[RMDB]
RNA sequence: GGGAACGACUCGAGUAGAGUCGAAAACAGGAAACCUGGUUGAAAAACUUUCACCAUGGUUCAUGGAUGGCGAAAAUGCCUAUGAAGUGGUGAAGGCCAUGUUACUUAAAAAGGAGCCACUUCUCUACAGGAUCCUACUUCGGUAGGAUCAAAAGAAACAACAACAACAAC
Reactivity to 2A3 in 0.01 (KOAc 150mM, MgCl2 10mM, bicine 150mM(pH8.5), 24C), signal-to-noise 9, nucleotides 027 to 129: c030a020g090g050a060a020a020c010c010u030g010g040u120u260g070a030a020a000a010a040c070u050u040u020c010a000c000c000a020u200g050g010u030u020c010a000u040g060g030a050u110g010g010c040g050a130a120a050a090u250g020c010c000u080a130u110g010a000a000g010u000g010g020u060g040a090a030g080g000c000c010a030u090g040u070u120a130c090u100u180a040a060a040a030a030g070g010a010g000c000c000a010c030u020u000c030u010c010u050a110c050a040g120
Reactivity to DMS in 0.01 (KOAc 150mM, MgCl2 10mM, bicine 150mM(pH8.5), 24C), signal-to-noise 7, nucleotides 027 to 129: c060a050g030g030a030a010a010c000c010u020g000g020u030u050g040a020a020a030a220a190c250u010u010u000c010a020c010c020a040u050g020g000u000u000c040a000u040g030g020a000u000g000g010c000g050a060a050a090a050u060g030c000c030u020a070u040g000a030a020g030u000g020g040u000g020a090a070g000g050c000c060a050u010g030u030u020a090c090u030u060a030a040a040a050a060g000g000a300g050c000c020a040c040u000u000c000u000c090u000a050c170a080g050

Notes: Structure probing data (2A3 and DMS) for a 170-nucleotide construct. The data come from the RNA Mapping Database (RMDB), library 15KLIB. The reactions ran in a buffer of 150 mM KOAc, 10 mM MgCl2 and 150 mM bicine (pH 8.5), at 24 C. The 2A3 profile rests on 29,932 reads. For DMS, 36,246 sequencing reads were counted. For 2A3 the reverse transcriptase was SuperScript II with manganese. For DMS the reverse transcriptase was MarathonRT.